[RMDB]
RNA sequence: GGGAACGACUCGAGUAGAGUCGAAAAGAUAUGGAUUCAGGAUGAUCCCUCCCUCGGAAACGAGGGAUGGAUCUAAUCCUGGUCCUAAGUCAAAAGCCCGUAGUGAUGUUCGCAUCACUACGGGCAACAGUAUUAUGACCUUCGGGUCAUAAUACUGAAAAGAAACAACAACAACAAC
Reactivity to DMS in 0.01 (KOAc 150mM, MgCl2 10mM, bicine 150mM(pH8.5), 24C), signal-to-noise 4, nucleotides 027 to 126: g010a050u000a300u010g000g000a010u000u010c000a000g000g030a020u000g010a010u000c010c000c060u010c000c000c000u000c000g000g010a100a060a140c000g010a020g020g010g000a000u000g000g000a000u000c000u010a050a030u000c000c000u000g010g010u000c000c000u010a040a100g010u000c040a110a110a170a140g010c000c000c000g010u000a010g020u000g000a000u000g010u000u010c290g010c010a000u000c010a000c010u000a000c000g000g000g020c020a000a010
Reactivity to 2A3 in 0.01 (KOAc 150mM, MgCl2 10mM, bicine 150mM(pH8.5), 24C), signal-to-noise 2, nucleotides 027 to 126: g020a010u100a060u150g010g000a020u300u240c000a010g020g000a010u030g000a000u010c000c010c000u030c000c010c010u000c000g040g060a190a080a060c030g000a040g000g060g000a000u000g000g000a000u030c010u000a000a020u000c000c010u000g010g000u000c000c010u000a080a020g030u040c030a080a100a100a150g000c010c010c000g000u000a000g000u000g000a010u000g020u090u150c300g000c130a000u020c000a000c010u000a000c010g020g000g010c000a010a000